This 177-nucleotide RNA was probed chemically with DMS and 2A3. Reactivities are given for positions 27 through 126.

RNA sequence: GGGAACGACUCGAGUAGAGUCGAAAAACCCGCACGUAACCUUCAGAGAGUGUGGAUCUGAGUAGGAGACUGUGGUGCGCUGCUUUACAGACGUAGCCCAGUUUAAAAAACGUCUAUGCCCCUACAGUCCGCAACAAUGUUUCGACAUUGUUGCGGAAAAAGAAACAACAACAACAAC
Reactivity to DMS in 0.01 (KOAc 150mM, MgCl2 10mM, bicine 150mM(pH8.5), 24C), signal-to-noise 1, nucleotides 027 to 126: a090c050c010c000g030c140a060c040g010u010a020a060c020c000u010u000c110a010g000a220g000a060g040u000g010u010g000g000a060u050c020u010g000a040g000u020a040g020g010a100g020a030c000u000g000u010g010g010u000g000c040g030c030u000g040c130u010u000u020a090c090a020g000a090c010g000u020a040g040c000c030c000a080g020u000u010u040a000a040a050a040a000a010c030g030u000c060u010a100u000g000c040c050c010c000u000a060c080a170g000
Reactivity to 2A3 in 0.01 (KOAc 150mM, MgCl2 10mM, bicine 150mM(pH8.5), 24C), signal-to-noise 1, nucleotides 027 to 126: a000c000c000c000g000c040a040c040g020u010a020a060c000c000u020u030c020a020g030a000g030a000g030u100g010u030g010g020a020u020c040u050g010a040g070u150a050g120g000a060g000a000c020u010g030u090g050g000u050g000c030g000c000u020g040c030u080u110u110a050c010a120g040a100c030g010u100a090g070c000c000c000a000g000u020u010u070a030a120a000a000a000a000c000g040u010c050u030a080u180g000c020c000c040c000u030a010c000a070g100
The data come from the RNA Mapping Database (RMDB), libraries RFM100 and RFMREP. 2A3 adducts were read by reverse transcription with SuperScript II with manganese.